RNA sequence: GGGAACGACUCGAGUAGAGUCGAAAAGAUAUGGAGAUAUGUAGGGAGCUCUGUGGUCGGAAACGACCACGGAGCAUCGAUCUAUUUAUCUCCUAAGUCAAAGGACUAAGAGUUCGCUCUUAGUCCAUCUCAUCCAUAACUUCGGUUAUGGAUGAGAAAAAGAAACAACAACAACAAC
Reactivity to 2A3 in 0.01 (KOAc 150mM, MgCl2 10mM, bicine 150mM(pH8.5), 24C), signal-to-noise 1, nucleotides 027 to 126: g000a000u020a020u070g000g000a000g000a000u010a020u090g030u020a000g030g120g170a300g070c010u000c000u010g010u020g010g020u020c000g000g000a020a010a010c000g000a000c010c050a000c030g000g000a010g000c000a000u040c020g010a010u010c000u000a000u010u020u000a000u000c000u000c000c000u010a000a000g000u020c030a090a100a160g000g010a010c000u010a000a000g020a000g030u110u100c300g090c170u000c010u000u010a000g000u000c000c010a000
Reactivity to DMS in 0.01 (KOAc 150mM, MgCl2 10mM, bicine 150mM(pH8.5), 24C), signal-to-noise 2, nucleotides 027 to 126: g010a010u000a100u010g000g000a060g010a010u000a010u000g010u000a010g020g000g010a300g050c000u010c010u010g010u000g010g030u000c000g000g000a020a000a070c010g000a010c000c010a000c000g000g000a010g040c000a010u010c230g000a140u000c000u000a000u000u000u000a000u010c000u000c000c000u010a000a040g000u000c000a140a170a150g030g000a010c000u010a000a010g000a030g020u000u020c300g010c000u000c000u000u000a000g000u000c000c000a020